This 177-nucleotide RNA was probed chemically with DMS.
DMS adducts were read by reverse transcription with MarathonRT.
The DMS profile rests on 897 reads.
Conditions: 150 mM KOAc, 10 mM MgCl2 and 150 mM bicine (pH 8.5), 24 C.
[RMDB]
RNA sequence: GGGAACGACUCGAGUAGAGUCGAAAAGGAACAUCCUUCGGGAUGUUCCAUAGGCGGCGCCUCUCGCUAAGCCGCGCGCAGAGGCGCGCAGCGCAGCUUGAAAGUAAGCCUAGUUCGCUAGGCUUAAUGGUUCUCACGAAUUCGUUCGUGAGAACCAAAAAGAAACAACAACAACAAC
Reactivity to DMS in 0.01 (KOAc 150mM, MgCl2 10mM, bicine 150mM(pH8.5), 24C), signal-to-noise 1, nucleotides 027 to 126: g010g000a020a010c010a000u000c000c000u000u000c250g020g020g020a000u000g020u000u000c000c000a040u000a020g010g010c040g000g000c040g030c020c010u000c000u000c050g000c050u030a100a190g020c100c110g010c170g000c080g000c170a040g010a020g000g040c010g000c000g040c010a050g030c030g030c140a060g000c100u000u000g000a060a120a060g000u000a000a010g000c000c000u000a000g000u000u000c190g040c000u000a020g000g010c000u020u000a000a030